An RNA of 177 nucleotides, treated with DMS and 2A3 and read out base by base. For DMS, 2,339 sequencing reads were counted. For 2A3, 604 sequencing reads were counted. High DMS reactivity at an A or C suggests that its Watson-Crick edge is free. 2A3 adducts were read by reverse transcription with SuperScript II with manganese. For DMS the reverse transcriptase was MarathonRT.
RNA sequence: GGGAACGACUCGAGUAGAGUCGAAAAAUCUACAGAAGUGUCUGUUACUGUUUUGGAAGAGUAAUACUGUUCGCUUAUCCAUAUUUCCCCGUUCUGGGGAAGCCUCAUGGGUAAAUUAGAAGGACAAGUCACGACUAAAUUUCGAUUUAGUCGUGACAAAAGAAACAACAACAACAAC
Reactivity to DMS in 0.01 (KOAc 150mM, MgCl2 10mM, bicine 150mM(pH8.5), 24C), signal-to-noise 2, nucleotides 027 to 126: a050u000c050u010a070c040a030g010a110a140g000u020g000u000c050u020g000u010u010a100c010u000g000u000u000u000u000g020g000a060a110g000a080g000u010a070a130u060a070c140u000g000u000u000c010g000c210u000u020a000u010c030c000a000u000a060u030u020u020c000c000c000c000g000u020u060c110u070g000g000g000g000a000a000g060c300c170u030c170a000u010g020g010g000u000a030a000a110u070u030a060g000a140a160g000g000a020c070a040a110
Reactivity to 2A3 in 0.01 (KOAc 150mM, MgCl2 10mM, bicine 150mM(pH8.5), 24C), signal-to-noise 2, nucleotides 027 to 126: a000u130c100u130a060c040a050g060a220a090g150u050g050u070c050u090g080u110u050a050c000u060g070u140u060u110u150g110g060a100a090g000a020g130u080a070a020u020a180c030u020g000u000u010c000g000c100u000u010a000u030c000c020a000u020a030u000u000u000c010c010c010c010g060u170u060c150u300g000g000g000g000a000a000g010c030c050u140c020a020u000g000g020g000u020a000a010a010u070u100a040g080a110a040g030g000a020c000a040a060